[RMDB]
Structure probing data (2A3 and DMS) for a 207-nucleotide construct.
Source: RMDB library M2RFPK, as collected in RNAgym.
Conditions: 150 mM KOAc, 10 mM MgCl2 and 150 mM bicine (pH 8.5), 24 C.
DMS adducts were read by reverse transcription with MarathonRT.
RNA sequence: GGGAACGACUCGAGUAGAGUCGAAAAUGAAGCAAAUCCAUAAUUGCCGAUGAUGAGCAAUUCGCUAUUGCCGCCUAAAAACGGUUAGCCGGGGCUGCUAGAGCCUUGUUACCAAAGAUAGCCGGCGUUACGGCAUGAUGGUUCGCCAUCAUGCCAAUCCGUUGUAAUGGUUCGCCAUUACAACGGAAAAAGAAACAACAACAACAAC
Reactivity to 2A3 in 0.01 (KOAc 150mM, MgCl2 10mM, bicine 150mM(pH8.5), 24C), signal-to-noise 3, nucleotides 027 to 156: u140g010a040a020g010c060a070a050a070u070c030c000a040u070a140a060u080u040g000c020c040g050a090u190g070a090u100g020a050g060c030a020a040u110u030c070g000c050u090a120u100u120g000c000c010g020c010c020u080a060a050a010a000a010c020g000g000u040u040a010g020c010c020g010g020g000g000c020u040g000c110u130a020g030a000g130c000c020u020u040g070u070u040a040c000c020a080a050a020g030a020u040a010g030c030c010g020g030c000g060u080u100a040c100g020g010c000a000u000g000a000u000g000g020u040u050c130g020c030c000a000u000c000a000u000g000c000c000a000a000
Reactivity to DMS in 0.01 (KOAc 150mM, MgCl2 10mM, bicine 150mM(pH8.5), 24C), signal-to-noise 1, nucleotides 027 to 156: u000g050a100a020g020c050a030a160a150u020c100c050a130u030a040a140u000u010g000c020c030g000a230u010g020a110u020g000a130g020c010a050a080u000u000c120g010c060u000a130u000u010g000c060c000g010c050c060u020a070a100a080a090a080c040g000g010u010u010a050g000c030c010g030g080g030g000c020u010g050c090u000a070g010a060g030c000c010u000u000g000u030u010a180c180c030a070a110a160g000a140u000a030g000c000c120g000g020c050g000u020u000a090c180g030g060c010a010u000g000a030u010g010g020u010u000c300g030c030c000a030u010c000a000u020g090c040c000a020a070